Background: This 207-nucleotide RNA was probed chemically with DMS and 2A3. The reactions ran in a buffer of 150 mM KOAc, 10 mM MgCl2 and 150 mM bicine (pH 8.5), at 24 C. The data come from the RNA Mapping Database (RMDB), library M2RFPK. Values are in units of 0.01, from 0 to 300, in steps of 10. Reactivities are given for positions 27 through 156.
RNA sequence: GGGAACGACUCGAGUAGAGUCGAAAACAAUGAUGAGCAAUUCGCUAUUGCCGCCUAAAAACGGUUAGCCGGGGCUGCUAGAGCCUUGUUACCAAAGAUACCCGGCGGGGACUUCGGUCCCCGUCGUUGAAGGGCUGUACGUUCGCGUACAGCCCAACCAUAUACACAAGUUCGCUUGUGUAUAUGGAAAAGAAACAACAACAACAAC
Reactivity to DMS in 0.01 (KOAc 150mM, MgCl2 10mM, bicine 150mM(pH8.5), 24C), signal-to-noise 1, nucleotides 027 to 156: c060a090a110u010g010a130u010g010a130g020c030a100a110u010u000c100g030c050u000a060u000u010g010c000c010g010c010c020u010a070a040a100a090a050c030g000g020u000u000a050g030c090c030g040g030g040g060c020u000g010c050u000a090g000a080g000c030c000u020u010g000u000u000a100c000c020a110a120a110g020a170u000a040c000c020c000g040g000c000g000g000g000g030a050c000u010u000c300g030g000u000c030c000c000c000g000u000c000g010u010u000g000a070a160g020g060g050c030u000g030u020a000c010g060u000u000c300g000c030g020u010a000c000a030g050c000c010c000a000a000
Reactivity to 2A3 in 0.01 (KOAc 150mM, MgCl2 10mM, bicine 150mM(pH8.5), 24C), signal-to-noise 1, nucleotides 027 to 156: c030a000a150u130g050a050u070g020a050g020c020a040a110u120u180c020g040c030u030a050u060u120g010c010c020g030c000c010u130a160a140a000a000a000c020g000g000u060u050a030g060c020c000g010g000g020g000c010u030g000c050u050a030g020a010g250c010c000u000u030g000u020u080a100c030c000a110a070a000g050a040u090a110c030c000c000g010g000c030g000g010g000g000a000c010u070u050c180g050g010u000c030c000c000c000g000u000c000g010u010u070g010a020a030g010g010g000c000u000g000u000a000c000g020u020u080c230g000c020g090u000a000c000a000g030c000c020c000a000a000
For 2A3 the reverse transcriptase was SuperScript II with manganese.